Chemical mapping of a 207-nucleotide RNA with DMS and 2A3.
The DMS profile rests on 7,522 reads.
For 2A3 the reverse transcriptase was SuperScript II with manganese.
DMS adducts were read by reverse transcription with MarathonRT.
The RNA was probed in 150 mM KOAc, 10 mM MgCl2 and 150 mM bicine (pH 8.5) at 24 C.
[RMDB]
RNA sequence: GGGAACGACUCGAGUAGAGUCGAAAAUCCUAAGUCACGGAUAACCAGCUCGUUUGACGUCCAUGGGAGCAUCGGAAACGAUGCGAAGAACAUGGACCGAGAGCUGAUGAAAUCCGUGAUAUGGAAAAAGCCCAAUACUCUUCGGAGUAUUGGGCAACUAAAGAACAGACUUCGGUCUGUUCUUUAGAAAAGAAACAACAACAACAAC
Reactivity to DMS in 0.01 (KOAc 150mM, MgCl2 10mM, bicine 150mM(pH8.5), 24C), signal-to-noise 3, nucleotides 027 to 156: u010c010c000u020a080a240g020u000c000a010c020g010g030a030u000a170a060c010c000a020g020c010u000c010g020u000u000u020g010a110c140g010u000c000c000a020u000g000g000g010a300g020c010a010u010c040g010g010a220a200a260c010g040a020u000g030c010g010a070a160g020a110a150c010a000u000g010g010a010c000c010g000a080g000a020g020c000u040g010a010u000g010a100a300a060u000c000c010g040u010g000a000u000a060u010g010g010a080a100a120a190a210g010c000c010c010a010a000u000a000c000u000c000u000u000c300g030g000a030g000u010a000u000u000g000g000g020c000a000a000
Reactivity to 2A3 in 0.01 (KOAc 150mM, MgCl2 10mM, bicine 150mM(pH8.5), 24C), signal-to-noise 2, nucleotides 027 to 156: u040c010c000u020a090a020g010u000c000a000c000g010g010a020u020a130a160c030c000a010g000c010u000c010g210u110u210u290g090a090c060g000u000c000c000a000u000g020g000g030a030g000c000a000u000c010g030g050a040a110a060c010g000a000u000g000c000g010a050a010g010a010a010c000a000u000g000g000a010c000c010g030a030g000a000g000c000u000g000a010u060g030a030a170a000u000c000c000g000u000g000a000u010a040u030g020g040a080a070a060a080a020g010c000c000c000a000a000u000a000c000u010c010u030u070c300g060g000a000g000u000a000u000u000g000g000g000c000a000a000